[RMDB]
RNA sequence: GGGAACGACUCGAGUAGAGUCGAAAACAUCGCGACUUCGGUCGCGAUGAAAGUUGUGCUCCCUCACGCAUAACAAAUCCCAAUGAGGGUAGGUGACAGCAAAACGACACGCCUUCGGGCGUGUCAAAGUUAUUAGACAUUUCGAUGUCUAAUAACUAAAAGAAACAACAACAACAAC
Reactivity to 2A3 in 0.01 (KOAc 150mM, MgCl2 10mM, bicine 150mM(pH8.5), 24C), signal-to-noise 4, nucleotides 027 to 126: c000a000u000c000g010c000g020a000c010u040u080c260g110g010u000c010g020c000g010a000u000g000a000a000a000g020u020u020g010u010g010c010u070c030c010c000u020c000a040c080g060c020a050u030a100a010c020a020a120a060u040c000c010c030a010a060u110g010a020g020g000g030u070a080g040g140u080g060a030c020a030g060c020a060a100a040a060c090g020a000c000a000c000g010c010c010u030u090c240g070g010g000c020g010u000g000u000c000a000a000
Reactivity to DMS in 0.01 (KOAc 150mM, MgCl2 10mM, bicine 150mM(pH8.5), 24C), signal-to-noise 6, nucleotides 027 to 126: c000a000u000c000g010c000g020a020c000u000u010c190g040g020u000c000g020c000g010a000u000g000a020a040a100g010u000u000g020u000g010c010u000c020c010c000u000c020a110c180g000c020a020u010a020a050c050a070a110a110u000c000c000c000a080a070u010g000a020g010g000g010u010a030g010g010u000g000a060c080a050g010c110a070a040a090a090c170g010a020c000a010c000g000c000c000u000u010c230g020g010g010c000g020u010g000u000c000a000a020
Structure probing data (2A3 and DMS) for a 177-nucleotide construct. Reactivities are given for positions 27 through 126. For 2A3 the reverse transcriptase was SuperScript II with manganese. It was measured as part of the RMDB library M2PK50.